[RMDB]
RNA sequence: GGGAACGACUCGAGUAGAGUCGAAAAUGAAUGUUGGCUUUAUCGCAGAUGUAUUUGAGCGAGCCAUCGGUACAGUGAUCAUUUUUAUGCAGCGCUUCUAAGGUAUCGGUGACGGAAGCGAGCCACACAGUCACGGAGUGUUCGCACUCCGUGACUGAAAAGAAACAACAACAACAAC
Reactivity to DMS in 0.01 (KOAc 150mM, MgCl2 10mM, bicine 150mM(pH8.5), 24C), signal-to-noise 1, nucleotides 027 to 126: u000g010a070a070u010g000u000u000g040g000c010u000u000u000a060u000c070g040c040a190g020a110u010g020u020a160u010u000u000g030a140g010c030g000a020g000c030c020a020u000c000g000g000u000a020c020a080g030u000g000a070u010c030a080u010u000u000u000u020a040u010g000c080a190g000c060g000c010u000u000c030u010a090a120g000g010u000a040u000c010g000g030u020g000a060c030g030g000a070a050g000c060g020a070g010c010c020a010c000a140
Reactivity to 2A3 in 0.01 (KOAc 150mM, MgCl2 10mM, bicine 150mM(pH8.5), 24C), signal-to-noise 1, nucleotides 027 to 126: u100g060a010a010u030g030u090u090g030g000c000u070u090u070a130u090c000g000c020a070g040a300u150g120u290a180u030u200u260g150a060g020c000g000a010g000c000c000a000u000c000g000g020u060a020c040a050g120u050g170a080u000c020a050u070u100u000u040u160a100u060g070c050a060g020c040g020c020u000u050c040u060a070a030g060g000u020a020u010c000g000g010u000g090a080c050g020g040a010a010g010c000g000a000g000c000c000a050c000a020

Chemical mapping of a 177-nucleotide RNA with DMS and 2A3. Conditions: 150 mM KOAc, 10 mM MgCl2 and 150 mM bicine (pH 8.5), 24 C. Reactivities are rounded to 0.1 and cut off at 0 and 3. The data come from the RNA Mapping Database (RMDB), library OK2TST. The 2A3 profile rests on 983 reads.